The record gives the reactivity of an RNA of 177 nucleotides to 2A3 and DMS. It was measured as part of the RMDB library TTRDES. The RNA was probed in 150 mM KOAc, 10 mM MgCl2 and 150 mM bicine (pH 8.5) at 24 C. The 2A3 profile rests on 2,243 reads.

RNA sequence: GGGAACGACUCGAGUAGAGUCGAAAAGAUAUGGAAUCCCGGUGGGAGCUUAUCGGUCGGAAACGACCGUAAGAGCAUCGAUCACCCGGGAUUCCUAAGUCAAAACCUAUGACCUUCGGGUCAUAGGGUAUACUCACGACUUCGGUCGUGAGUAUACAAAAGAAACAACAACAACAAC
Reactivity to 2A3 in 0.01 (KOAc 150mM, MgCl2 10mM, bicine 150mM(pH8.5), 24C), signal-to-noise 1, nucleotides 027 to 126: g000a000u000a010u070g000g000a020a020u010c020c070c090g000g020u160g010g150g100a250g000c000u070u000a030u190c010g020g040u000c000g010g000a020a000a020c000g000a000c000c030g000u000a090a050g020a010g010c010a020u300c180g210a220u140c000a020c010c050c050g010g010g000a000u010u000c000c000u000a010a010g000u000c010a040a000a070a220c000c020u010a020u000g000a000c010c010u000u000c300g210g000g000u000c000a000u000a000g010g030
Reactivity to DMS in 0.01 (KOAc 150mM, MgCl2 10mM, bicine 150mM(pH8.5), 24C), signal-to-noise 2, nucleotides 027 to 126: g020a060u000a160u000g000g000a000a000u000c000c000c020g010g060u000g030g010g040a090g020c000u000u000a100u020c030g010g010u000c010g000g000a020a040a070c000g040a000c010c000g000u000a030a170g000a060g020c040a200u010c300g010a090u020c020a090c090c030c050g010g010g010a010u000u000c000c020u000a010a070g000u000c000a070a070a130a300c000c000u000a000u000g010a000c000c000u000u000c220g040g010g000u000c000a000u000a000g010g030

DMS adducts were read by reverse transcription with MarathonRT.